[RMDB]
RNA sequence: GGGAACGACUCGAGUAGAGUCGAAAACUCAUGCCGCGGUGCCACAACAUUUUCAGAUUUACUAAGACUCCGGUGAGUGUGGGCUCACCCGCGGGUCGUGAUCACGAUUCAGCACCCUUUGGACAAAGCUAUCGACUCAGUUCGCUGAGUCGAUAGCAAAAGAAACAACAACAACAAC
Reactivity to DMS in 0.01 (KOAc 150mM, MgCl2 10mM, bicine 150mM(pH8.5), 24C), signal-to-noise 1, nucleotides 027 to 126: c000u000c080a210u060g030c030c020g020c090g000g050u000g000c010c050a010c120a220a140c120a050u000u000u000u000c140a150g040a050u020u030u020a050c130u040a050a050g000a000c000u000c010c020g000g030u000g000a030g020u000g000u080g050g020g000c000u000c000a000c010c040c150g060c130g020g000g000u000c040g020u010g010a090u020c060a150c180g020a070u000u000c180a050g020c020a090c030c000c100u010u000u050g000g010a150c020a030a060a070
Reactivity to 2A3 in 0.01 (KOAc 150mM, MgCl2 10mM, bicine 150mM(pH8.5), 24C), signal-to-noise 5, nucleotides 027 to 126: c010u050c010a060u120g030c020c040g100c060g020g000u050g000c010c030a100c050a140a090c050a170u070u160u110u140c030a050g020a030u020u080u200a070c040u120a160a030g000a010c020u000c000c000g000g000u020g030a010g020u200g100u120g120g240g000c000u020c010a010c040c100c030g020c190g000g010g000u000c010g000u000g030a030u030c010a010c150g070a080u090u050c020a000g020c020a030c000c060c010u070u130u120g040g000a030c080a030a080a000